[RMDB]
RNA sequence: GGGAACGACUCGAGUAGAGUCGAAAAGAUAUGGAGGGAUAUGUGGCGACGAUCUGUACAUCGGAAACGAUGUCACAGGGAGCCACAUAUCCCUCCUAAGUCAAAAGGGCAAUCUUCGGAUUGCCCACCUUGUGGGAUUGUUCGCAAUCCCACAAGGAAAAGAAACAACAACAACAAC
Reactivity to DMS in 0.01 (KOAc 150mM, MgCl2 10mM, bicine 150mM(pH8.5), 24C), signal-to-noise 2, nucleotides 027 to 126: g060a010u000a300u010g000g010a030g030g010g020a000u000a000u000g020u010g000g010c000g000a040c300g020a050u000c030u010g000u010a010c000a010u020c000g010g000a140a100a280c020g040a010u000g020u010c210a000c000a000g010g030g000a030g020c020c020a000c000a010u000a000u020c000c000c000u000c000c000u000a000a030g000u000c060a080a090a210a130g010g010g000c000a020a000u000c000u010u020c230g020g000a000u000u000g000c000c000c000a000
Structure probing data (DMS) for a 177-nucleotide construct. The RNA was probed in 150 mM KOAc, 10 mM MgCl2 and 150 mM bicine (pH 8.5) at 24 C. Reactivities are given for positions 27 through 126. DMS (dimethyl sulfate) methylates the pairing face of unpaired adenines and cytosines. The data come from the RNA Mapping Database (RMDB), library TTRDES.